The data come from the RNA Mapping Database (RMDB), library ARCHII.
The record gives the reactivity of an RNA of 207 nucleotides to 2A3.
RNA sequence: GGGAACGACUCGAGUAGAGUCGAAAACGCCCUCGGCCCGGACCCUGGCAUCAGCUAGAGGGAUCCACCGAUGAGUCCGGUCGCGGGACUCCUCGGGACAACCACAGCGACUGGGAUCGUCAUCUCGGCUAGUUCGCGUGACCGGGAGAUCCGAGCAGAUUGAAGGAUUGUUCGCAAUCCUUCAAUCAAAAGAAACAACAACAACAAC
Reactivity to 2A3 in 0.01 (KOAc 150mM, MgCl2 10mM, bicine 150mM(pH8.5), 24C), signal-to-noise 1, nucleotides 027 to 156: c040g030c000c020c000u000c070g090g020c030c020c060g000g020a030c000c000c010u000g010g000c020a050u030c050a120g000c000u010a030g000a070g030g010g020a070u070c080c040a050c000c030g000a000u020g000a000g030u000c030c030g050g000u060c040g050c020g030g000g010a010c000u000c000c020u090c020g070g010g040a040c040a050a100c010c010a040c040a080g010c000g040a030c000u000g000g010g010a050u030c080g030u050c080a150u000c030u020c000g070g050c020u010a020g040u150u090c160g040c070g170u050g080a300c030c010g000g000g010a050g020a040u000c000c000g000a040g000c010a030
About this RNA:
For 2A3, 704 sequencing reads were counted.